[RMDB]
RNA sequence: GGGAACGACUCGAGUAGAGUCGAAAAGGACGCCGUGUUUGGAGAGCGGACGAAAGCUCUUGCUUCCGGCCCGCUGUCAAGCGUACCACACGAUCGAGUGAGGGUGGACUCGACAGGUCCGCCAUACGCCGGUUUGUUCGUUCGCGAGCGAACCGGCAAAAGAAACAACAACAACAAC
Reactivity to 2A3 in 0.01 (KOAc 150mM, MgCl2 10mM, bicine 150mM(pH8.5), 24C), signal-to-noise 9, nucleotides 027 to 126: g030g010a010c030g030c030c020g090u090g060u090u120u200g080g010a060g000a000g020c000g000g030a030c030g070a030a020a000g000c000u040c060u190u300g040c000u030u000c010c000g040g000c040c000c000g000c010u030g100u110c030a030a010g010c000g010u040a170c000c010a020c000a010c040g060a120u170c050g040a040g090u080g030a110g040g050g000u030g010g020a030c010u030c090g050a030c040a030g010g010u010c000c010g000c010c000a020u040a040c040
Reactivity to DMS in 0.01 (KOAc 150mM, MgCl2 10mM, bicine 150mM(pH8.5), 24C), signal-to-noise 6, nucleotides 027 to 126: g000g000a060c040g010c050c300g020u010g000u000u040u030g030g000a040g010a020g020c000g010g000a120c020g000a050a010a040g020c010u010c250u010u050g010c000u010u010c020c010g000g040c110c010c000g000c020u000g010u010c030a110a090g000c030g020u010a110c020c030a070c060a050c050g000a110u020c130g010a100g010u000g000a110g010g000g030u000g000g000a030c000u000c050g000a110c250a160g000g000u000c000c000g000c010c000a060u010a010c130